[RMDB]
About this RNA: Conditions: 150 mM KOAc, 10 mM MgCl2 and 150 mM bicine (pH 8.5), 24 C. An RNA of 177 nucleotides, treated with DMS and 2A3 and read out base by base. For DMS the reverse transcriptase was MarathonRT. It was measured as part of the RMDB library OK1LIB.

RNA sequence: GGGAACGACUCGAGUAGAGUCGAAAACUCGUUCACGGUUACGUCUGUCUCUGGCAGAGCAGACCGUCAGGAGGACGAGGUCACCAUCUUCACGAAGCCAAAGCCAAAUUCCGCCUUGUCCUGUAAAACUCGGUACCCUGUUCGCAGGGUACCGAGUAAAAGAAACAACAACAACAAC
Reactivity to DMS in 0.01 (KOAc 150mM, MgCl2 10mM, bicine 150mM(pH8.5), 24C), signal-to-noise 1, nucleotides 027 to 126: c000u000c010g000u000u010c000a090c000g150g070u110u020a020c210g000u000c000u000g050u080c000u020c090u000g000g050c270a000g000a000g090c100a020g000a020c020c130g000u060c000a140g000g000a300g000g000a020c000g000a000g000g030u000c070a300c190c010a080u190c200u000u080c070a080c080g060a010a070g000c080c000a020a160a300g000c000c060a010a070a060u000u000c070c000g000c080c030u000u000g000u000c000c000u000g000u080a000a060a080
Reactivity to 2A3 in 0.01 (KOAc 150mM, MgCl2 10mM, bicine 150mM(pH8.5), 24C), signal-to-noise 1, nucleotides 027 to 126: c000u030c000g030u090u060c040a010c050g020g030u110u230a030c060g000u000c010u000g110u000c000u010c020u130g180g000c160a000g030a010g060c030a000g000a010c000c000g000u010c010a060g110g050a020g060g000a040c000g000a000g020g030u000c000a020c040c000a110u010c010u250u170c100a080c090g050a010a000g040c010c000a040a000a010g060c030c000a000a090a000u090u000c020c010g020c010c000u040u060g000u000c000c000u020g010u220a100a000a000